[RMDB]
RNA sequence: GGGAACGACUCGAGUAGAGUCGAAAAGCCGGGGACAUCUCGGAAUGAGAAAGGAGACAGGUGGAAGAAAAAGGGGUGGGCCCCCCGAUCCGAGGGGCCCGACGCCCGGAUCUGGAGAGCACUCCCGUGGACCUGAACUUCGGUUCAGGUAAAAGAAACAACAACAACAAC
Reactivity to DMS in 0.01 (KOAc 150mM, MgCl2 10mM, bicine 150mM(pH8.5), 24C), signal-to-noise 9, nucleotides 027 to 129: g020c010c030g000g020g010g020a050c140a070u010c010u000c030g010g030a070a040u060g000a090g020a030a100a060g000g000a030g000a070c090a030g010g020u030g000g000a110a050g010a020a050a060a250a140g010g000g000g010u020g010g010g040c030c010c020c000c010c020g030a070u060c160c050g050a060g000g000g030g030c000c010c000g000a050c080g030c000c010c000g000g040a050u030c030u020g000g020a060g000a070g020c080a100c050u010c020c020c000g050u010g010g010
Reactivity to 2A3 in 0.01 (KOAc 150mM, MgCl2 10mM, bicine 150mM(pH8.5), 24C), signal-to-noise 8, nucleotides 027 to 129: g020c010c010g010g000g020g010a050c040a110u040c030u000c040g030g050a040a040u140g030a030g040a030a070a020g050g010a030g000a030c060a030g020g070u070g060g050a070a060g030a050a080a020a020a030g010g000g010g010u050g010g000g010c010c000c000c000c000c010g040a090u060c060c040g000a030g000g010g010g020c000c000c000g020a020c030g040c000c020c000g000g000a010u010c020u050g020g020a030g000a010g020c030a020c060u030c010c000c000g030u100g050g020
Structure probing data (DMS and 2A3) for a 170-nucleotide construct. Source: RMDB library 15KLIB, as collected in RNAgym. Reactivities are given for positions 27 through 129. For 2A3, 24,222 sequencing reads were counted. The DMS profile rests on 62,584 reads. The reactions ran in a buffer of 150 mM KOAc, 10 mM MgCl2 and 150 mM bicine (pH 8.5), at 24 C.